RNA sequence: GGGAACGACUCGAGUAGAGUCGAAAAAAGGUAUGGUUUAUGAAGUAUAUUCUCAGCCCAUCCGAACAAAGCAGACUGAGACUGACUCUUCCAUUGUUAGAAGCCUGUACACUGCUGAAGUAAUGAACAUUUAAAAUCCGUUCGCGGAUUUUAAAUGAAAAGAAACAACAACAACAAC
Reactivity to 2A3 in 0.01 (KOAc 150mM, MgCl2 10mM, bicine 150mM(pH8.5), 24C), signal-to-noise 1, nucleotides 027 to 126: a000a000g070g010u090a000u020g000g010u060u170u000a050u050g080a090a090g120u110a060u020a030u300u000c040u030c020a010g040c000c000c050a040u000c020c010g050a050a010c090a110a050a000g030c100a020g060a050c100u110g030a000g030a190c030u010g050a020c010u020c060u070u050c040c010a080u050u200g070u070u000a080g020a100a070g030c000c000u000g030u050a020c080a020c020u020g000c030u010g040a080a010g100u150a050a070u210g020a050a000
Reactivity to DMS in 0.01 (KOAc 150mM, MgCl2 10mM, bicine 150mM(pH8.5), 24C), signal-to-noise 2, nucleotides 027 to 126: a100a060g000g010u000a040u000g010g020u000u000u000a030u020g010a090a100g000u000a090u020a100u000u000c000u000c030a060g000c040c010c030a140u000c050c020g000a060a060c110a030a130a040g020c030a030g010a110c080u000g000a090g010a100c120u010g000a060c100u000c060u000u020c030c070a120u020u010g000u000u010a110g010a090a110g000c180c030u000g000u000a050c050a090c040u000g020c030u010g010a070a060g000u000a070a080u000g010a090a110
Conditions: 150 mM KOAc, 10 mM MgCl2 and 150 mM bicine (pH 8.5), 24 C. Chemical mapping of a 177-nucleotide RNA with 2A3 and DMS. It was measured as part of the RMDB library OK2TRN. The 2A3 profile rests on 769 reads.